Chemical mapping of a 177-nucleotide RNA with 2A3 and DMS.
For DMS, 1,224 sequencing reads were counted.
Conditions: 150 mM KOAc, 10 mM MgCl2 and 150 mM bicine (pH 8.5), 24 C.
RNA sequence: GGGAACGACUCGAGUAGAGUCGAAAAUCCGACCGCUUCGGCGGUCGGAAAAGAAAGCGUGGGACACCGAAGGCAUACGGUGAAGAACGCAACAAUGCCAAAAAAUCCCUUUGUUCGCAAAGGGAAAGUGUAGAAAUGAGUUCGCUCAUUUCUACACAAAAGAAACAACAACAACAAC
Reactivity to 2A3 in 0.01 (KOAc 150mM, MgCl2 10mM, bicine 150mM(pH8.5), 24C), signal-to-noise 2, nucleotides 027 to 126: u010c000c000g020a000c000c000g110c080u100u060c260g150g030c000g010g030u030c000g000g030a030a010a000a000g000a020a040a000g000c000g010u020g010g030g000a010c020a010c010c000g040a110a030g130g030c100a110u140a100c020g000g000u000g010a030a020g080a030a010c010g040c060a000a010c030a040a110u140g070c000c000a020a040a000a010a000a110u040c000c000c000u000u010u010g040u060u060c280g000c120a010a000a030g000g000g060a010a030a010
Reactivity to DMS in 0.01 (KOAc 150mM, MgCl2 10mM, bicine 150mM(pH8.5), 24C), signal-to-noise 2, nucleotides 027 to 126: u000c000c010g000a020c000c000g030c000u010u030c140g010g030c000g000g010u000c010g000g000a000a010a060a140g010a080a150a130g000c010g050u000g020g000g020a300c010a000c000c000g000a070a180g030g010c140a100u010a080c050g000g030u000g020a010a300g000a080a000c020g000c040a040a090c050a060a040u000g000c030c020a000a030a090a070a080a120u000c000c000c000u000u000u000g030u020u040c170g030c020a000a020a010g010g000g000a030a010a030
About this RNA: The data come from the RNA Mapping Database (RMDB), library M2PK50.